This 177-nucleotide RNA was probed chemically with DMS and 2A3. The RNA was probed in 150 mM KOAc, 10 mM MgCl2 and 150 mM bicine (pH 8.5) at 24 C. As a SHAPE reagent, 2A3 marks flexible, mostly unpaired nucleotides at the ribose 2'-OH. Source: RMDB library RFM100, as collected in RNAgym. 2A3 adducts were read by reverse transcription with SuperScript II with manganese. The 2A3 profile rests on 1,023 reads.
[RMDB]
RNA sequence: GGGAACGACUCGAGUAGAGUCGAAAAUUCAGUGAAGACAAGGGGUUUCGGCCUUUUGAACGCACUGAUGCCCUGACGCUGCUUCAUUACGGAGCUGUGUCCGGGGCCCCGGUGGAUUUCGAUCCGCGUUCCCAAUGCCUUUCGAGGCAUUGGGAACAAAAGAAACAACAACAACAAC
Reactivity to DMS in 0.01 (KOAc 150mM, MgCl2 10mM, bicine 150mM(pH8.5), 24C), signal-to-noise 1, nucleotides 027 to 126: u000u000c000a020g030u000g060a000a060g010a300c000a000a030g000g000g000g000u000u000u000c200g050g000c000c000u050u000u000u000g000a000a300c300g000c000a000c040u010g000a000u010g030c010c000c000u000g000a000c000g000c000u050g020c000u000u000c000a260u000u130a300c120g000g030a010g000c000u000g000u000g000u000c050c120g000g000g000g000c000c000c000c050g000g050u000g000g000a040u000u000u100c030g020a010u000c000c050g060c000
Reactivity to 2A3 in 0.01 (KOAc 150mM, MgCl2 10mM, bicine 150mM(pH8.5), 24C), signal-to-noise 2, nucleotides 027 to 126: u080u000c000a010g000u000g000a070a000g010a050c000a000a000g090g020g000g020u030u080u140c190g180g000c000c000u010u010u010u000g020a020a020c020g020c030a000c000u010g000a000u000g040c000c000c000u020g000a000c010g000c010u020g000c000u000u000c020a200u200u300a150c230g010g000a000g020c000u010g010u000g000u000c050c120g000g000g010g010c010c000c000c000g040g010u130g000g000a020u050u060u070c170g040a030u010c000c000g050c020